[RMDB]
RNA sequence: GGGAACGACUCGAGUAGAGUCGAAAACGUGAACAUCGCUCUGCUAAGUCCCGUCGUUCUUCCAGUCAGAGCGAGAUUGUAAGCAACCUUAUGCGCAAUGAAGACAUAGAGGGACUUCUCGAAGAAGAAUGGUACCCGUAUUCGUACGGGUACCAUUAAAAGAAACAACAACAACAAC
Reactivity to DMS in 0.01 (KOAc 150mM, MgCl2 10mM, bicine 150mM(pH8.5), 24C), signal-to-noise 4, nucleotides 027 to 126: c160g020u000g030a170a070c060a090u000c010g010c000u000c000u010g000c060u020a090a080g020u030c040c080c060g030u010c040g000u010u010c000u010u020c030c140a110g020u010c020a020g000a030g000c000g010a000g010a040u010u010g010u000a130a190g000c090a060a130c100c060u030u020a080u010g020c020g040c050a080a100u000g020a080a070g000a040c040a010u000a080g000a080g000g000g000a030c040u010u000c080u000c110g000a120a100g010a100a070g000
Reactivity to 2A3 in 0.01 (KOAc 150mM, MgCl2 10mM, bicine 150mM(pH8.5), 24C), signal-to-noise 4, nucleotides 027 to 126: c080g110u120g060a010a050c010a060u020c000g000c000u000c000u030g060c060u060a040a030g070u150c070c050c040g020u060c000g000u020u020c010u060u000c040c000a050g150u110c000a020g000a000g050c050g000a000g000a040u020u120g020u060a010a070g020c000a010a100c010c040u080u150a060u100g040c080g030c020a060a090u180g060a080a060g030a010c030a030u090a010g160a040g070g010g020a010c000u000u020c030u020c080g140a120a110g030a050a010g030
Conditions: 150 mM KOAc, 10 mM MgCl2 and 150 mM bicine (pH 8.5), 24 C.
This 177-nucleotide RNA was probed chemically with DMS and 2A3.
It was measured as part of the RMDB library OK1LIB.
2A3 adducts were read by reverse transcription with SuperScript II with manganese.
Values cover nucleotides 27 to 126.
For 2A3, 3,177 sequencing reads were counted.
For DMS the reverse transcriptase was MarathonRT.